[RMDB]
RNA sequence: GGGAACGACUCGAGUAGAGUCGAAAAUUGCCGCGGGUGUGGUUGGCCUUGCCGUUGGGGCUACUGGCGCUGGGUUCGUCAAUGUUCUUCGGUGCUUACCCGUGGGCGGGGUGGCUGGCCUUCGCCGAGUACUCUAGACAUUCGUGUCUAGAGUACUAAAAGAAACAACAACAACAAC
Reactivity to DMS in 0.01 (KOAc 150mM, MgCl2 10mM, bicine 150mM(pH8.5), 24C), signal-to-noise 3, nucleotides 027 to 126: u010u000g010c020c010g020c070g010g000g020u000g030u010g010g010u000u000g020g000c010c030u000u020g010c040c050g010u000u000g000g000g000g010c120u000a050c180u000g010g010c010g010c010u000g000g000g000u000u000c020g000u000c290a110a130u030g000u000u000c010u010u010c030g010g010u000g010c020u000u010a090c020c000c010g020u010g020g010g020c010g000g000g010g020u000g000g000c040u010g010g000c030c020u000u000c050g010c020c020g010
Reactivity to 2A3 in 0.01 (KOAc 150mM, MgCl2 10mM, bicine 150mM(pH8.5), 24C), signal-to-noise 2, nucleotides 027 to 126: u080u070g090c020c020g010c030g070g010g020u090g010u070g030g040u070u060g030g000c000c020u010u090g110c020c010g060u060u140g020g010g020g010c040u100a060c100u090g020g000c020g000c010u030g020g030g000u030u020c020g060u080c050a100a120u150g010u000u030c030u130u120c020g000g000u000g000c000u050u100a040c000c010c000g020u170g020g000g070c030g010g010g000g020u030g020g000c010u000g010g000c000c000u100u100c030g000c020c020g010

Overview:
This 177-nucleotide RNA was probed chemically with DMS and 2A3. Values cover nucleotides 27 to 126. The data come from the RNA Mapping Database (RMDB), library OK2TRN.